Annotation:
The record gives the reactivity of an RNA of 177 nucleotides to 2A3 and DMS.

[RMDB]
RNA sequence: GGGAACGACUCGAGUAGAGUCGAAAAACUAGUCAUGGGUACUGAUCUCAUGUCAUGAUCAGCUGCUAGAGUACAUGAGUACCUAGACAGACAUGGAUCCGAUCACUAGCGUACGUACAGUACCUAGAUGUACGGCAUGCUUCGGCAUGCCGUACAUAAAAGAAACAACAACAACAAC
Reactivity to 2A3 in 0.01 (KOAc 150mM, MgCl2 10mM, bicine 150mM(pH8.5), 24C), signal-to-noise 1, nucleotides 027 to 126: a020c100u110a020g060u070c010a080u080g000g070g000u060a190c060u100g150a190u090c040u020c030a030u060g000u000c060a070u090g040a060u070c000a010g010c040u050g000c000u020a000g040a030g060u000a000c060a100u300g080a090g130u000a000c010c020u010a020g080a180c000a030g020a030c010a110u060g100g000a030u000c020c040g000a150u090c000a020c070u010a010g000c010g140u020a000c020g000u040a110c070a160g000u000a000c020c000u000a060g000
Reactivity to DMS in 0.01 (KOAc 150mM, MgCl2 10mM, bicine 150mM(pH8.5), 24C), signal-to-noise 2, nucleotides 027 to 126: a170c070u000a070g020u000c030a050u000g010g000g000u000a230c110u010g040a050u020c020u000c050a050u000g000u000c070a140u000g000a100u010c040a080g030c050u000g000c020u000a020g010a210g070u000a010c040a160u040g000a130g050u000a000c010c000u010a010g000a190c000a000g000a030c080a100u000g020g000a060u000c040c100g000a090u000c050a170c040u000a010g010c170g010u020a020c020g010u020a070c180a130g010u010a020c000c020u030a010g020
Notes:
The 2A3 profile rests on 891 reads. Values cover nucleotides 27 to 126. The reactions ran in a buffer of 150 mM KOAc, 10 mM MgCl2 and 150 mM bicine (pH 8.5), at 24 C. It was measured as part of the RMDB library OK2TRN.